Record summary:
The record gives the reactivity of an RNA of 170 nucleotides to 2A3 and DMS. The 2A3 profile rests on 79,047 reads. The RNA was probed in 150 mM KOAc, 10 mM MgCl2 and 150 mM bicine (pH 8.5) at 24 C. DMS adducts were read by reverse transcription with MarathonRT. It was measured as part of the RMDB library 15KLIB.
[RMDB]
RNA sequence: GGGAACGACUCGAGUAGAGUCGAAAAUGUCCAGUCCCUCCCCGUUCCUGGAGAAGGGAGACUCGGGAACGCCUAGCAUCUGAGGGACGAAGCCGCCCCCGGGCGCUCCCCUCGGAGAUCCACUGGGAAAUCCGUAAGUUCGCUUACGGAAAAAGAAACAACAACAACAAC
Reactivity to 2A3 in 0.01 (KOAc 150mM, MgCl2 10mM, bicine 150mM(pH8.5), 24C), signal-to-noise 9, nucleotides 027 to 129: u100g040u010c010c000a000g030u000c000c000c000u000c000c000c000c000g010u010u020c010c010u080g160g020a060g010a070a090g100g050g020a060g030a010c010u000c010g010g000g010a020a020c020g030c010c020u040a030g030c020a110u020c010u020g010a010g000g010g010a010c060g040a040a010g050c080c030g030c000c000c000c010c010g040g000g000c020g010c010u020c000c000c000c000u000c010g000g000a030g000a010u060c040c020a060c060u040g020g010g010a030a090a040
Reactivity to DMS in 0.01 (KOAc 150mM, MgCl2 10mM, bicine 150mM(pH8.5), 24C), signal-to-noise 9, nucleotides 027 to 129: u050g000u030c030c020a050g000u000c000c010c000u010c010c010c010c020g020u000u000c010c000u010g020g030a030g010a120a070g010g000g000a050g020a080c040u010c000g010g010g000a040a040c100g020c040c050u010a060g000c120a110u020c020u010g000a010g000g010g030a130c100g020a060a200g010c040c040g030c020c020c000c090c150g000g000g000c030g020c040u020c010c000c000c000u000c010g000g000a030g010a080u010c040c040a120c060u040g000g000g000a070a070a090